The data come from the RNA Mapping Database (RMDB), library OK2TST. Chemical mapping of a 177-nucleotide RNA with DMS and 2A3. 2A3 adducts were read by reverse transcription with SuperScript II with manganese. DMS adducts were read by reverse transcription with MarathonRT. Values cover nucleotides 27 to 126. The 2A3 profile rests on 2,213 reads.

RNA sequence: GGGAACGACUCGAGUAGAGUCGAAAACAUCGCAUCCAGUUCGUGUAGAUAGAUACGAUCACCUGCGCGAAAGAGACGGCGCUGGGUGCCAUCUUCAUUAAGGACAAAGACCGGCUUUGCUAAGUAGGUUAGAGGGUCUAUUCGUAGACCCUCUAACAAAAGAAACAACAACAACAAC
Reactivity to DMS in 0.01 (KOAc 150mM, MgCl2 10mM, bicine 150mM(pH8.5), 24C), signal-to-noise 2, nucleotides 027 to 126: c140a070u000c100g000c030a040u010c010c020a060g010u000u000c020g050u000g000u000a000g010a070u020a100g020a060u000a060c240g000a300u000c040a050c040c010u000g010c000g000c000g020a060a100a130g020a090g000a060c040g010g020c060g020c010u000g010g020g010u010g000c010c110a080u010c020u020u010c110a120u000u010a130a110g000g010a050c120a060a030a070g000a110c030c030g000g000c020u010u000u020g020c080u020a020a060g010u000a060g010
Reactivity to 2A3 in 0.01 (KOAc 150mM, MgCl2 10mM, bicine 150mM(pH8.5), 24C), signal-to-noise 2, nucleotides 027 to 126: c020a040u090c040g030c000a010u000c010c000a000g030u020u010c020g000u020g020u030a020g000a080u080a060g030a020u090a130c140g100a120u040c000a000c000c000u010g000c000g000c000g030a080a080a010g090a010g030a000c030g040g000c010g000c000u010g000g000g000u010g000c010c000a100u020c030u150u040c020a140u130u210a110a070g060g030a030c040a010a060a000g070a030c030c000g000g010c040u070u050u070g030c040u070a080a090g020u020a050g120